[RMDB]
RNA sequence: GGGAACGACUCGAGUAGAGUCGAAAAGAUAUGGAUGCACUACCCACCGCAUCUGGGUCGAAGAACAUUCUUCGGAAACGAAGAAUGGGAGACCUAAAGAUGCGAGGUGCAUCCUAAGUCAAACGUUUGUACCAAUCUUCGGAUUGGUACAAACGAACAGUCAUCAGAUCUUCGGAUCUGAUGACUGAAAAGAAACAACAACAACAAC
Reactivity to DMS in 0.01 (KOAc 150mM, MgCl2 10mM, bicine 150mM(pH8.5), 24C), signal-to-noise 2, nucleotides 027 to 156: g010a140u010a200u000g010g030a000u010g010c000a020c010u000a110c020c020c030a300c090c060g000c000a000u000c000u030g030g000g030u000c000g000a220a190g010a080a270c000a030u000u000c000u000u000c000g020g000a120a070a220c000g030a010a020g030a020a010u000g020g000g000a300g000a010c070c010u000a010a110a000g020a020u000g030c000g000a030g040g020u000g000c020a000u010c000c000u030a000a070g010u030c040a090a060a180c010g010u000u000u000g000u010a000c000c000a000a020u000c010u010u000c300g020g000a020u000u000g010g030u000a000c000a010a010a020c010g000a040a060
Reactivity to 2A3 in 0.01 (KOAc 150mM, MgCl2 10mM, bicine 150mM(pH8.5), 24C), signal-to-noise 2, nucleotides 027 to 156: g110a040u210a090u220g000g000a010u000g000c010a010c000u180a210c030c040c000a020c000c010g010c010a000u000c010u020g000g000g010u030c010g120a300a030g000a060a010c000a000u010u010c000u000u010c000g020g020a030a030a030c010g000a000a010g010a000a000u000g010g000g010a030g000a000c030c000u040a140a200a030g000a000u010g000c000g000a000g010g000u000g000c000a000u000c000c000u010a020a000g090u090c130a110a050a060c030g010u000u000u000g000u000a000c000c000a010a000u000c000u030u040c190g070g000a000u000u010g000g020u000a000c000a000a000a000c000g010a000a000